The data come from the RNA Mapping Database (RMDB), library OK3TST. Structure probing data (2A3 and DMS) for a 207-nucleotide construct. DMS adducts were read by reverse transcription with MarathonRT. The reactions ran in a buffer of 150 mM KOAc, 10 mM MgCl2 and 150 mM bicine (pH 8.5), at 24 C. 2A3 adducts were read by reverse transcription with SuperScript II with manganese. Reactivities are given for positions 27 through 156.
RNA sequence: GGGAACGACUCGAGUAGAGUCGAAAAUACUCAUUACUCUGCUUUCAUUUAGAAAAAUGACAUGUAGAGAAUAGGUCUAGAUUAUUUUAAGGAGCAGAGGUCUAUUUCCUUGAAAUGGAAUAGAAUAUGUGUGUCUUUGCCUGAAAACACACGUACAUAUAACUUUUGGAUUCGUCCAAAAGUUAUAAAAAGAAACAACAACAACAAC
Reactivity to 2A3 in 0.01 (KOAc 150mM, MgCl2 10mM, bicine 150mM(pH8.5), 24C), signal-to-noise 3, nucleotides 027 to 156: u040a000c020u030c040a050u090u130a100c000u000c010u000g020c010u090u080u150c030a160u050u100u160a160g100a110a190a040a040a030u090g020a020c010a040u130g050u160a040g040a030g000a110a070u130a110g040g010u010c010u030a050g020a240u150u030a050u040u300u060u100a070a040g020g000a030g000c030a000g020a020g040g000u000c010u000a050u050u090u100c010c000u020u040g090a060a070a080u130g010g000a010a010u000a020g020a030a010u100a050u050g010u000g030u000g020u000c060u100u110u110g090c020c030u100g040a020a020a010a010c000a000c000a000c000g000u040a030c040a030
Reactivity to DMS in 0.01 (KOAc 150mM, MgCl2 10mM, bicine 150mM(pH8.5), 24C), signal-to-noise 2, nucleotides 027 to 156: u000a030c020u000c030a130u010u000a130c000u000c000u010g020c000u000u010u010c030a070u000u000u000a140g010a070a130a080a020a050u000g010a010c090a110u020g010u010a070g010a090g010a120a150u000a040g010g020u000c090u000a120g000a200u000u000a050u000u000u000u000a060a140g000g000a080g020c050a060g010a070g030g030u000c030u010a070u000u000u010c000c020u010u000g020a080a110a130u000g000g000a070a050u000a040g010a080a140u000a030u010g010u000g020u000g000u010c010u000u010u000g020c170c080u010g000a070a030a030a000c000a000c010a010c010g050u010a000c070a160